Chemical mapping of a 207-nucleotide RNA with DMS. Source: RMDB library M2RFPK, as collected in RNAgym. DMS adducts were read by reverse transcription with MarathonRT. The RNA was probed in 150 mM KOAc, 10 mM MgCl2 and 150 mM bicine (pH 8.5) at 24 C.
RNA sequence: GGGAACGACUCGAGUAGAGUCGAAAAGCGAAAGUUGCCAUCAGACCGUAACUUUCGUAGUCAUUGAUAAAGGGGCAGGUCUCGCUCUUUUGUCAUUGCGGUUGCCUAGAGGCAUGGUCGUUUACCGAAAAGAGCUCAUUCUUCGGAAUGAGCUCAAGAAUGACAGGAAGUUCGCUUCCUGUCAUUCAAAAGAAACAACAACAACAAC
Reactivity to DMS in 0.01 (KOAc 150mM, MgCl2 10mM, bicine 150mM(pH8.5), 24C), signal-to-noise 1, nucleotides 027 to 156: g010c020g000a010a020a020g000u000u000g000c020c050a300u020c050a160g010a060c070c140g010u000a030a050c030u000u000u000c000g020u000a020g060u030c090a150u000u030g000a050u010a030a000a000g050g000g000g000c000a100g020g050u010c130u020c120g000c000u010c000u000u000u000u010g000u000c000a080u000u000g010c080g050g030u010u000g040c000c050u010a080g010a190g000g010c010a070u000g000g030u000c030g020u000u000u000a120c050c020g020a140a080a140a150g000a030g000c010u010c000a010u000u000c000u000u000c300g030g020a000a010u000g020a030g030c010u000c000a010a020